An RNA of 177 nucleotides, treated with DMS and 2A3 and read out base by base. Values cover nucleotides 27 to 126. The 2A3 profile rests on 1,618 reads. For 2A3 the reverse transcriptase was SuperScript II with manganese. The DMS profile rests on 1,106 reads. It was measured as part of the RMDB library OK2TRN.
[RMDB]
RNA sequence: GGGAACGACUCGAGUAGAGUCGAAAAACUAUUUCAGACUUAUACACAUUAGUUCAUGAAUUUGGGCAUUCAGCACAUAGUUACUUCAGUAGAAAAUUCCAACCGUCAAAUUCUAGUGACUACACUAGGUCAAGCACGUUUUCGAACGUGCUUGACCAAAAGAAACAACAACAACAAC
Reactivity to DMS in 0.01 (KOAc 150mM, MgCl2 10mM, bicine 150mM(pH8.5), 24C), signal-to-noise 2, nucleotides 027 to 126: a130c060u010a110u000u000u000c040a060g010a050c050u000u000a080u000a150c150a080c100a060u000u000a040g010u000u000c030a120u010g010a000a040u000u000u000g010g000g020c070a140u000u010c030a090g010c080a040c080a100u000a020g000u010u000a090c090u010u000c050a050g000u000a080g000a010a130a040a140u000u000c030c030a020a110c080c050g000u000c050a030a040a070u000u020c080u020a060g010u000g020a130c160u020a030c170a020c070u000a060
Reactivity to 2A3 in 0.01 (KOAc 150mM, MgCl2 10mM, bicine 150mM(pH8.5), 24C), signal-to-noise 2, nucleotides 027 to 126: a010c040u060a100u060u080u060c030a030g050a070c010u080u100a060u070a120c100a000c010a110u010u090a040g010u020u060c040a060u100g110a110a070u090u040u070g060g040g000c030a040u050u090c030a070g000c050a010c000a060u030a030g020u060u030a060c030u060u070c050a050g030u060a030g120a070a110a020a030u090u000c030c040a040a030c050c040g080u030c040a020a090a000u060u050c030u010a040g050u020g050a040c020u100a050c080a010c040u020a050